An RNA of 177 nucleotides, treated with 2A3 and DMS and read out base by base. For DMS, 27,396 sequencing reads were counted. It was measured as part of the RMDB library TTRDEL.

RNA sequence: GGGAACGACUCGAGUAGAGUCGAAAAGAUAUGGAUAACGAGGAUCUAUUGAGGGCAACAGCUCGGAAACGAGACAUGCCUGUAAGUAGGGAGUUAUCCUAAGUCAAAAGCACGGUUCGCCGUGCAACUCUAACAAUGAGUUCGCUCAUUGUUAGAGAAAAGAAACAACAACAACAAC
Reactivity to 2A3 in 0.01 (KOAc 150mM, MgCl2 10mM, bicine 150mM(pH8.5), 24C), signal-to-noise 7, nucleotides 027 to 126: g030a010u080a030u180g010g010a000u000a010a000c020g050a300g080g010a020u000c010u010a010u030u070g080a130g010g020g000c010a050a040c050a250g040c010u000c000g010g020a080a070a030c010g010a000g030a050c040a080u100g000c000c000u020g020u020a010a010g000u000a000g000g000g010a030g000u000u000a000u000c000c000u010a110a020g040u010c030a060a040a050a070g000c000a000c000g010g050u080u170c300g040c110c000g000u000g000c000a000a010
Reactivity to DMS in 0.01 (KOAc 150mM, MgCl2 10mM, bicine 150mM(pH8.5), 24C), signal-to-noise 9, nucleotides 027 to 126: g010a040u010a300u000g000g000a010u000a010a010c000g000a100g020g000a020u010c000u000a010u000u000g000a220g000g000g010c010a020a070c300a150g000c010u000c000g010g000a060a080a200c010g010a020g000a040c100a200u000g000c000c000u000g000u010a090a050g000u000a000g000g000g000a030g000u000u000a010u000c000c000u000a030a050g010u010c030a070a080a110a110g010c010a000c010g000g010u000u010c270g020c010c000g010u000g010c010a020a030
The 2A3 profile rests on 39,110 reads. Reactivities are rounded to 0.1 and cut off at 0 and 3. The reactions ran in a buffer of 150 mM KOAc, 10 mM MgCl2 and 150 mM bicine (pH 8.5), at 24 C.